[RMDB]
RNA sequence: GGGAACGACUCGAGUAGAGUCGAAAACGGCUGCUCUUCUUUCUCUUUCGUCGUCAUCCUUGGCUAACCGCUCAAGUUCCUCCUCUUCCUCUCGGCUGAGGUGCUUCCCUCCCGCGGCCAGCUGCUUUAUUAUAUUGUAGUUCGCUACAAUAUAAUAAAAAGAAACAACAACAACAAC
Reactivity to DMS in 0.01 (KOAc 150mM, MgCl2 10mM, bicine 150mM(pH8.5), 24C), signal-to-noise 6, nucleotides 027 to 126: c140g010g010c040u000g010c030u010c030u000u000c040u010u010u000c020u000c030u000u000u000c070g010u000c050g010u000c060a080u000c030c030u010u010g010g010c040u000a080a120c120c060g010c040u010c080a080a120g010u000u000c020c010u000c020c020u000c030u000u000c010c010u000c070u000c100g010g010c050u000g010a070g010g000u000g010c040u000u000c010c010c010u000c030c010c030g030c060g010g010c020c030a070g010c070u000g000c110u000u000
Reactivity to 2A3 in 0.01 (KOAc 150mM, MgCl2 10mM, bicine 150mM(pH8.5), 24C), signal-to-noise 2, nucleotides 027 to 126: c030g050g010c020u020g010c000u040c000u090u050c000u020u090u010c020u010c000u040u080u050c040g030u020c010g040u020c030a040u060c030c000u020u020g020g000c020u030a070a060c020c010g020c020u040c070a040a030g040u060u040c010c010u030c000c000u020c000u040u010c010c010u030c000u020c010g020g000c030u020g010a030g030g020u020g020c010u020u010c000c000c000u000c010c000c000g020c010g020g020c010c000a010g010c020u050g010c000u010u030